This 177-nucleotide RNA was probed chemically with 2A3 and DMS. Conditions: 150 mM KOAc, 10 mM MgCl2 and 150 mM bicine (pH 8.5), 24 C. The 2A3 profile rests on 909 reads. It was measured as part of the RMDB library OK2TST.
[RMDB]
RNA sequence: GGGAACGACUCGAGUAGAGUCGAAAAAGGGCGGGACCACACUUCCCGGGCUUAUCUCGGGUUCCAUGGGUCUAUCCCUCCAUAUGCCUUACUAACGGGAGGGUUACUGGGACCACACUUUACGGGCAGCCCCAAUCAUAUUCGUAUGAUUGGGGCUAAAAGAAACAACAACAACAAC
Reactivity to 2A3 in 0.01 (KOAc 150mM, MgCl2 10mM, bicine 150mM(pH8.5), 24C), signal-to-noise 1, nucleotides 027 to 126: a020g020g030g020c090g030g010g020a030c010c010a030c010a050c160u070u000c000c000c000g000g010g060c100u140u140a070u070c030u010c000g000g010g030u050u040c040c010a040u080g060g000g020u000c020u040a170u090c000c010c010u030c000c000a020u060a060u190g060c000c020u050u190a120c060u140a060a070c160g040g010g000a070g010g010g000u000u020a030c030u070g020g000g010a000c050c000a000c010a020c060u130u150u070a090c040g020g000g000c020
Reactivity to DMS in 0.01 (KOAc 150mM, MgCl2 10mM, bicine 150mM(pH8.5), 24C), signal-to-noise 2, nucleotides 027 to 126: a050g000g030g000c160g040g020g030a070c060c020a140c150a040c110u010u000c000c010c000g040g000g020c160u020u010a090u000c010u000c030g020g000g000u020u000c020c090a100u010g000g010g000u020c090u010a050u000c000c000c000u000c010c020a080u000a070u000g010c060c050u010u000a130c190u010a120a090c220g020g000g000a040g000g000g010u000u010a050c100u020g010g000g000a050c040c020a090c120a060c120u000u010u010a070c060g000g020g020c100